An RNA of 177 nucleotides, treated with DMS and 2A3 and read out base by base.
As a SHAPE reagent, 2A3 marks flexible, mostly unpaired nucleotides at the ribose 2'-OH.
The reactions ran in a buffer of 150 mM KOAc, 10 mM MgCl2 and 150 mM bicine (pH 8.5), at 24 C.
For 2A3, 3,122 sequencing reads were counted.
For DMS the reverse transcriptase was MarathonRT.
The data come from the RNA Mapping Database (RMDB), library OK2TRN.
RNA sequence: GGGAACGACUCGAGUAGAGUCGAAAAGUCGCCGCGUCAACAUCAACGCCCAGCGCGGGCGAGGGACGCGUCCUACGGGGGUGCCCCAUUCGCCGGCAUGGGAGAGGACGGCAAGAUUGCCGCGACGAAUGCCCUCAUAUUUCGAUAUGAGGGCAUUAAAAGAAACAACAACAACAAC
Reactivity to DMS in 0.01 (KOAc 150mM, MgCl2 10mM, bicine 150mM(pH8.5), 24C), signal-to-noise 3, nucleotides 027 to 126: g010u000c000g010c010c160g000c000g030u000c010a090a120c070a090u010c050a090a140c070g000c000c010c010a050g000c140g010c030g000g020g000c000g010a060g010g010g010a040c040g010c010g010u000c000c000u020a100c160g050g020g010g010g020u000g000c000c010c010c010a170u020u000c020g010c000c010g040g020c030a100u010g000g010g010a080g010a100g000g000a050c070g000g000c120a070a080g000a120u010u020g030c000c130g000c030g010a030c010g000
Reactivity to 2A3 in 0.01 (KOAc 150mM, MgCl2 10mM, bicine 150mM(pH8.5), 24C), signal-to-noise 2, nucleotides 027 to 126: g030u010c010g010c010c000g000c010g040u020c020a120a140c010a120u050c010a000a100c100g020c000c000c000a060g000c300g030c100g210g010g030c000g010a020g020g010g000a020c090g020c010g090u040c000c000u030a150c200g190g000g000g010g000u000g000c000c000c000c000a170u110u060c010g010c020c000g100g030c010a020u020g000g000g030a070g050a050g040g050a030c010g010g030c000a010a020g050a060u130u300g000c010c000g000c020g000a010c000g020